[RMDB]
RNA sequence: GGGAACGACUCGAGUAGAGUCGAAAAGAAAAGCUGUCGAAAUAACUAUGAGACGGAAUAUCUAUAUCAACAUAGGAGACAGCGAAACGGAAACGGAAAAGAUAUAGAUAGAAUAACGUCAAAGAAAGGGUAGUGAUACUUUCGAGUAUCACUACCCAAAAGAAACAACAACAACAAC
Reactivity to 2A3 in 0.01 (KOAc 150mM, MgCl2 10mM, bicine 150mM(pH8.5), 24C), signal-to-noise 1, nucleotides 027 to 126: g200a000a030a010a000g000c000u000g020u000c000g050a140a010a070u110a190a000c090u090a020u290g010a090g010a100c000g050g080a010a020u060a000u020c000u000a000u000a000u000c070a030a080c030a060u060a080g060g040a060g000a000c050a000g020c010g030a050a000a000c050g150g010a000a230a000c070g050g110a030a030a030a030g000a000u050a000u000a000g000a000u000a000g000a040a120u250a100a030c010g000u030c000a030a030a030g140a100a000a000
Reactivity to DMS in 0.01 (KOAc 150mM, MgCl2 10mM, bicine 150mM(pH8.5), 24C), signal-to-noise 2, nucleotides 027 to 126: g000a090a070a060a200g040c010u000g010u020c000g040a040a010a230u000a050a190c070u060a130u050g000a300g050a000c000g000g020a050a030u000a010u010c000u000a000u000a020u000c000a050a090c130a100u000a150g000g000a300g000a070c000a000g010c000g030a100a100a060c040g000g000a120a070a040c080g000g010a150a040a220a090g000a020u000a000u000a000g000a000u000a060g000a100a040u020a070a160c020g000u000c000a100a120a090g000a060a100a100

The data come from the RNA Mapping Database (RMDB), library OK1LIB. This 177-nucleotide RNA was probed chemically with 2A3 and DMS. For DMS, 1,313 sequencing reads were counted.